Source information
Conditions: 150 mM KOAc, 10 mM MgCl2 and 150 mM bicine (pH 8.5), 24 C. The record gives the reactivity of an RNA of 207 nucleotides to DMS and 2A3. For DMS the reverse transcriptase was MarathonRT.
RNA sequence: GGGAACGACUCGAGUAGAGUCGAAAAUAGUGGUUUGUCUAACCAAAUGAGCAAUAGCAGGGUCUCGCCUUUGAAGCUCUAGCUGGAAGCAUCUUUGACCCCCAGCCCACAGGGAACCAUUCUUCUUGCAAUGCCCGUGGUUCUUCCUGCCUUAGGAAUGCUAUGGAUGUUUCGACAUCCAUAGCAUAAAAGAAACAACAACAACAAC
Reactivity to DMS in 0.01 (KOAc 150mM, MgCl2 10mM, bicine 150mM(pH8.5), 24C), signal-to-noise 2, nucleotides 027 to 156: u010a090g030u010g030g020u010u000u000g020u000c050u020a100a170c100c040a040a080a050u000g000a110g030c000a060a250u010a100g010c060a100g020g000g010u000c020u000c060g000c120c080u000u010u020g020a120a050g000c020u000c050u000a080g010c000u010g010g000a140a130g030c000a070u000c090u000u010u000g010a210c020c010c010c020c010a180g000c060c010c040a050c030a060g060g020g000a060a050c040c030a070u000u000c060u000u000c030u000u010g010c040a120a140u010g010c040c020c030g030u000g010g010u010u000c030u010u000c000c010u000g020c090c060u000u010a070g020g010a160
Reactivity to 2A3 in 0.01 (KOAc 150mM, MgCl2 10mM, bicine 150mM(pH8.5), 24C), signal-to-noise 2, nucleotides 027 to 156: u130a000g080u040g060g000u030u040u130g060u050c040u080a040a020c060c020a000a070a090u210g040a060g020c060a060a150u080a080g030c030a000g050g000g040u080c040u030c060g060c020c020u150u080u130g050a080a000g000c000u010c060u050a060g020c020u070g010g040a120a060g010c040a180u010c060u060u110u160g090a160c000c030c010c010c000a020g010c000c000c000a020c020a020g000g000g050a010a010c060c000a020u060u000c050u130u040c030u080u120g040c130a100a060u090g040c010c000c010g010u010g000g040u060u070c000u040u060c010c010u020g080c000c040u080u110a050g030g010a080

It was measured as part of the RMDB library OK3TST. For DMS, 4,647 sequencing reads were counted. High 2A3 reactivity points to a flexible backbone, as in loops and unpaired stretches.